This 177-nucleotide RNA was probed chemically with 2A3. The reactions ran in a buffer of 150 mM KOAc, 10 mM MgCl2 and 150 mM bicine (pH 8.5), at 24 C.
[RMDB]
RNA sequence: GGGAACGACUCGAGUAGAGUCGAAAAUUACAUAAGUCUAACACCUUGUUUCGGACUAACAAGGGCGAAUGGAGGAUGGCCGGACCUCCAUAGUUAGACGUCCGAGAACCAGCCGAAAUGAAAAAGAGAUAUCGCCUCCAUUCGUGGAGGCGAUAUCAAAAGAAACAACAACAACAAC
Reactivity to 2A3 in 0.01 (KOAc 150mM, MgCl2 10mM, bicine 150mM(pH8.5), 24C), signal-to-noise 1, nucleotides 027 to 126: u110u060a080c190a160u170a170a000g000u010c000u000a000a000c000a000c000c000u010u010g020u000u020u000c260g000g240a140c120u060a000a000c000a000a000g000g000g100c060g280a110a000u010g000g020a000g000g000a000u110g060g000c000c000g000g000a050c050c000u020c000c000a030u000a000g000u000u000a000g010a000c000g020u000c030c050g030a080g020a120a000c000c000a000g010c000c000g020a000a000a030u130g050a150a000a030a000a000g130a080